[RMDB]
RNA sequence: GGGAACGACUCGAGUAGAGUCGAAAAGGUAGGAUUAGGAUUUAGAUCCAGCCCAGUGUCGGGGUGAACAGUGACUAGAAUGUGAUUCCCCAAGAGAGCCUCGGCGAUGACAGUUUCUGGUCCUGGAAGGUAAUGGUAUGUUCGCAUACCAUUACCUAAAAGAAACAACAACAACAAC
Reactivity to DMS in 0.01 (KOAc 150mM, MgCl2 10mM, bicine 150mM(pH8.5), 24C), signal-to-noise 6, nucleotides 027 to 126: g020g020u000a110g010g030a070u010u000a090g030g000a130u000u000u010a130g010a050u000c010c000a300g010c040c000c040a100g020u000g020u010c030g010g010g000g020u000g000a070a070c050a030g010u010g020a030c020u010a040g000a040a030u000g000u010g000a230u000u010c010c010c010c150a080a080g010a110g010a230g000c020c000u000c030g010g000c050g000a100u000g000a070c070a060g010u000u010u000c010u000g000g000u000c010c020u000g000g010a180
Reactivity to 2A3 in 0.01 (KOAc 150mM, MgCl2 10mM, bicine 150mM(pH8.5), 24C), signal-to-noise 2, nucleotides 027 to 126: g050g030u090a020g020g010a090u080u050a090g120g040a140u070u100u290a100g020a030u010c000c020a020g010c000c000c000a040g050u030g010u080c030g000g000g000g000u050g030a060a030c000a020g030u010g100a010c000u010a030g050a080a040u110g030u030g050a060u050u030c000c000c000c000a010a030g060a010g010a010g050c000c000u000c000g020g000c020g020a010u060g000a010c030a030g020u000u040u070c030u020g010g000u010c020c000u030g000g030a070
Chemical mapping of a 177-nucleotide RNA with DMS and 2A3. For 2A3 the reverse transcriptase was SuperScript II with manganese. Source: RMDB library OK2TST, as collected in RNAgym. For DMS the reverse transcriptase was MarathonRT.